[RMDB]
RNA sequence: GGGAACGACUCGAGUAGAGUCGAAAAUGCGUGACAGCCGGGGGCACGGAGUUGCCCGGCGGCGCCAGUACUGCCCCCGACGGACCGGAAGGCAGGUGCCAUAGCUACCACUUCAGGACUGCGCCCAGUGAACAGAGAUAUUCGUAUCUCUGUUCACAAAAGAAACAACAACAACAAC
Reactivity to 2A3 in 0.01 (KOAc 150mM, MgCl2 10mM, bicine 150mM(pH8.5), 24C), signal-to-noise 3, nucleotides 027 to 126: u060g000c010g010u040g050a080c050a100g020c020c010g030g000g000g020g060c030a010c060g090g020a160g070u160u130g080c010c030c010g010g010c070g000g000c020g000c000c000a040g030u120a080c060u050g000c020c000c000c000c000g020a030c020g010g030a040c020c020g030g020a010a030g090g020c200a060g010g020u040g010c000c040a130u100a060g000c020u060a040c000c010a020c020u040u040c020a020g030g000a040c040u060g000c020g020c020c000c000a000
Reactivity to DMS in 0.01 (KOAc 150mM, MgCl2 10mM, bicine 150mM(pH8.5), 24C), signal-to-noise 4, nucleotides 027 to 126: u010g000c040g020u010g010a130c090a080g020c010c000g020g020g000g020g010c010a060c130g000g000a160g010u000u000g020c010c020c040g010g020c070g010g010c000g000c040c070a070g020u010a100c170u000g010c030c000c000c010c020g010a090c050g010g010a130c030c010g000g010a050a080g010g000c100a090g000g000u000g010c020c200a110u010a100g010c020u010a080c040c020a110c060u000u000c020a040g010g000a110c070u010g010c070g000c010c020c030a150

Structure probing data (2A3 and DMS) for a 177-nucleotide construct. The reactions ran in a buffer of 150 mM KOAc, 10 mM MgCl2 and 150 mM bicine (pH 8.5), at 24 C. For DMS, 4,972 sequencing reads were counted. It was measured as part of the RMDB library OK2TST. Values cover nucleotides 27 to 126. 2A3 adducts were read by reverse transcription with SuperScript II with manganese.